[RMDB]
RNA sequence: GGGAACGACUCGAGUAGAGUCGAAAAGAAAGAAAGAAAGAAAUCUGACAGAAUGACGGAUUCGAUCGUUGUGGUCGGCGGGCCACCACGUAAUUCCUUCGCACUGUCUCCGGGCAGACCGCCAUAAAAAAGCGGAUCUACUUCGGUAGAUCCGCAACAAGCGUUAUAUCUUCGGAUAUAACGCUUGAAAAGAAACAACAACAACAAC
Reactivity to DMS in 0.01 (KOAc 150mM, MgCl2 10mM, bicine 150mM(pH8.5), 24C), signal-to-noise 1, nucleotides 027 to 156: g010a120a110a050g000a070a040a130g040a070a090a100g020a040a050a030u000c020u000g090a300c040a090g000a100a100u000g010a060c040g000g020a070u010u000c050g010a100u000c000g010u000u000g010u010g000g010u000c030g000g020c100g070g020g010c010c010a050c020c030a030c000g000u000a050a090u000u000c050c020u000u010c050g000c080a190c080u000g000u000c010u040c030c080g030g000g000c050a000g000a040c010c010g030c010c030a100u030a000a020a080a090a040a130g000c020g000g010a010u000c000u000a000c010u000u000c170g040g000u000a010g000a000u000c000c000g000c000a000a000
Reactivity to 2A3 in 0.01 (KOAc 150mM, MgCl2 10mM, bicine 150mM(pH8.5), 24C), signal-to-noise 5, nucleotides 027 to 156: g030a010a070a010g060a030a090a000g070a030a090a020g030a040a120a030u050c050u080g030a090c070a090g200a200a180u150g030a060c050g020g010a020u070u080c040g040a060u110c000g010u010u000g000u010g000g020u040c060g010g010c030g000g000g000c010c000a000c010c000a000c000g020u030a020a090u060u060c020c000u050u100c060g020c060a060c020u010g010u020c010u010c070c080g030g020g000c020a020g040a080c000c010g010c010c010a040u270a030a140a000a030a010a000g000c000g000g000a000u000c000u000a000c000u010u030c110g010g000u000a000g000a000u000c010c000g000c000a000a000